[RMDB]
RNA sequence: GGGAACGACUCGAGUAGAGUCGAAAAUAUGUUAUAUGCAUGUCAGUGACUUUUAUAGCCCACCACAUUGUGUGACAGAAGAUAAUCGAAAUAACCCACCUGAUUGUGCUAAUGCUUAUCAUUAUCAUCUCCACAGGAGAUUCGUCUCCUGUGGAGAAAAAGAAACAACAACAACAAC
Reactivity to DMS in 0.01 (KOAc 150mM, MgCl2 10mM, bicine 150mM(pH8.5), 24C), signal-to-noise 2, nucleotides 027 to 126: u000a070u030g010u000u030a040u020a030u000g050c080a020u000g000u000c170a050g000u010g020a200c030u000u000u000u060a110u030a120g020c060c020c020a170c080c120a010c030a040u010u000g010u000g020u010g000a020c040a040g000a070a050g000a050u010a090a110u000c100g000a000a070a080u010a080a080c010c000c020a100c080c020u000g000a090u020u000g020u000g000c110u000a010a030u010g000c100u040u000a020u010c090a050u010u040a030u010c130a160
Reactivity to 2A3 in 0.01 (KOAc 150mM, MgCl2 10mM, bicine 150mM(pH8.5), 24C), signal-to-noise 3, nucleotides 027 to 126: u140a030u020g080u040u040a090u010a100u220g070c010a000u010g030u110c000a010g030u000g090a080c020u070u020u000u250a060u120a110g040c000c000c000a020c020c020a030c020a100u150u180g070u020g000u030g160a070c040a000g090a050a000g000a120u120a100a020u060c130g060a120a170a000u160a030a170c000c000c010a020c010c030u070g000a080u080u230g020u010g040c060u020a120a090u060g020c040u030u120a020u120c030a050u000u110a020u050c040a020